An RNA of 177 nucleotides, treated with DMS and 2A3 and read out base by base. Values cover nucleotides 27 to 126. The RNA was probed in 150 mM KOAc, 10 mM MgCl2 and 150 mM bicine (pH 8.5) at 24 C. DMS adducts were read by reverse transcription with MarathonRT. For 2A3, 3,098 sequencing reads were counted. It was measured as part of the RMDB library OK2TST.
RNA sequence: GGGAACGACUCGAGUAGAGUCGAAAACGCUGGGUGUCGACUGGGCCACUUUGAUGAUGGCGCGCUCGGAAGGCUCCCUGCCGGUCACUUGACCGAUCACGUCCGCGGCCGACAUCAGGACGCAGUCGCCCAUAUAGGUUUUCGAACCUAUAUGGGCAAAAGAAACAACAACAACAAC
Reactivity to DMS in 0.01 (KOAc 150mM, MgCl2 10mM, bicine 150mM(pH8.5), 24C), signal-to-noise 3, nucleotides 027 to 126: c130g000c020u000g010g020g010u000g010u010c000g030a300c030u000g010g010g010c000c030a030c010u000u000u020g030a160u010g020a090u010g000g020c030g020c150g020c020u000c000g000g010a030a300g010g020c010u010c010c010c000u010g030c070c030g000g000u000c010a150c290u000u000g010a040c000c020g000a100u000c140a120c070g010u000c030c090g000c050g000g010c010c010g000a070c110a100u000c100a110g040g010a020c020g030c040a080g000u010c140
Reactivity to 2A3 in 0.01 (KOAc 150mM, MgCl2 10mM, bicine 150mM(pH8.5), 24C), signal-to-noise 4, nucleotides 027 to 126: c020g030c020u040g000g020g000u030g010u030c010g000a020c000u010g020g010g040c050c010a050c040u110u090u260g290a290u140g020a090u110g090g100c020g010c050g000c080u020c000g020g010a010a020g020g000c010u010c000c000c010u010g030c030c020g000g000u040c030a130c300u230u300g010a010c010c000g010a070u140c090a030c220g040u040c060c060g000c010g020g030c010c010g070a060c020a160u180c070a080g000g020a010c000g000c020a020g090u110c070